This 177-nucleotide RNA was probed chemically with 2A3 and DMS. Values cover nucleotides 27 to 126. The data come from the RNA Mapping Database (RMDB), library OK2TRN. 2A3 adducts were read by reverse transcription with SuperScript II with manganese. The reactions ran in a buffer of 150 mM KOAc, 10 mM MgCl2 and 150 mM bicine (pH 8.5), at 24 C. For 2A3, 1,050 sequencing reads were counted. For DMS the reverse transcriptase was MarathonRT. The DMS profile rests on 955 reads.

RNA sequence: GGGAACGACUCGAGUAGAGUCGAAAAUAAUACUGCAAUAAGGUUUGAGUAUAAAUAGAAAUGCCUCAAUGAGCAGAUUAAGGUUUUUAAACAAGGCUGAACAGACUCUCUUAGGGACUCACCUUGACCUAUGUCCAAGUUUCGACUUGGACAUAGGAAAAGAAACAACAACAACAAC
Reactivity to 2A3 in 0.01 (KOAc 150mM, MgCl2 10mM, bicine 150mM(pH8.5), 24C), signal-to-noise 2, nucleotides 027 to 126: u030a000a020u070a230c040u020g000c000a000a070u130a110a060g150g030u090u070u060g000a000g010u050a060u070a300a200a030u200a080g100a030a180a040u150g010c000c000u070c070a000a060u060g010a010g000c010a000g000a110u060u070a040a000g100g000u020u110u050u080u300a070a080a020c030a070a070g020g030c070u030g000a010a010c040a040g060a090c000u040c000u000c070u080u110a090g000g030g020a020c010u000c010a010c000c000u000u020g000a000
Reactivity to DMS in 0.01 (KOAc 150mM, MgCl2 10mM, bicine 150mM(pH8.5), 24C), signal-to-noise 2, nucleotides 027 to 126: u020a030a040u000a120c030u010g000c020a060a140u020a170a110g030g020u000u000u010g000a000g010u000a150u010a150a100a190u010a160g020a080a200a100u010g010c080c000u000c080a010a040u000g010a150g000c010a070g020a040u000u010a020a120g010g000u000u010u000u000u050a020a080a150c100a030a010g000g040c120u000g020a070a090c110a140g000a120c040u000c030u000c140u010u020a060g000g030g010a080c100u000c050a080c040c000u000u000g000a230